[RMDB]
RNA sequence: GGGAACGACUCGAGUAGAGUCGAAAACGCGAUGGAUACGUCCAUCGCGAAUCCGUCCUAGCCGCGGACGUUAAACUGUGGCACGGUUGUGCCUAGGUGCAACCCUGCUACUAAUGGCGGUACCCCUGCCCAAGCUACCGUCUACGGACGGUAGCAAGUACGAUCAGGGAUUCGUCCCUGAUCGUACAAAAGAAACAACAACAACAAC
Reactivity to 2A3 in 0.01 (KOAc 150mM, MgCl2 10mM, bicine 150mM(pH8.5), 24C), signal-to-noise 1, nucleotides 027 to 156: c000g000c000g000a010u000g000g000a000u040a080c270g120u070c000c000a000u000c000g010c000g000a000a000u010c010c020g000u000c030c000u030a060g000c010c000g000c000g010g000a000c000g010u000u030a020a040a040c120u090g000u030g000g020c010a000c010g010g000u000u000g000u000g040c010c030u120a220g080g070u030g020c000a000a000c000c000c000u000g040c020u010a010c010u030a040a260u150g060g000c000g030g010u180a170c000c000c030c000u050g030c030c000c070a000a060g000c000u000a010c000c010g030u000c010u010a050c240g100g000a000c000g000g010u000a000g000c000a020a000